[RMDB]
RNA sequence: GGGAACGACUCGAGUAGAGUCGAAAAGAUAUGGAAAUGAGCAACAGCUCACGGACUCGGAAACGAGUUUGAGACAUGCUCGAUUCCUAAGUCAAAAGAAGACGAUUCGUUCGCGAAUCGUCUUCAACAUGUUCAUGGUCUUCGGACCAUGAACAUGAAAAGAAACAACAACAACAAC
Reactivity to DMS in 0.01 (KOAc 150mM, MgCl2 10mM, bicine 150mM(pH8.5), 24C), signal-to-noise 2, nucleotides 027 to 126: g000a030u010a150u000g000g000a000a000a140u000g020a020g000c010a030a240c250a140g000c080u000c000a030c300g000g010a000c000u020c020g020g000a080a030a140c000g000a010g050u010u000u010g000a040g000a050c050a170u020g010c000u020c000g000a090u000u000c000c000u000a030a110g010u020c000a060a050a080a140g000a030a010g020a020c000g000a030u000u000c000g010u000u000c210g030c000g000a000a000u000c000g010u000c000u000u000c010a070a140
Reactivity to 2A3 in 0.01 (KOAc 150mM, MgCl2 10mM, bicine 150mM(pH8.5), 24C), signal-to-noise 1, nucleotides 027 to 126: g000a030u010a000u150g020g000a000a000a190u130g000a030g030c020a010a250c070a160g030c040u000c000a010c050g040g000a000c000u000c010g030g070a020a070a030c030g020a000g010u000u030u020g020a030g020a000c040a070u020g000c010u000c020g010a030u010u010c000c010u030a070a020g050u050c030a010a000a040a160g000a000a000g000a000c010g000a000u000u010c000g020u040u110c300g030c030g190a000a000u010c000g000u000c000u000u030c000a000a000
The record gives the reactivity of an RNA of 177 nucleotides to DMS and 2A3. It was measured as part of the RMDB library TTRDEL.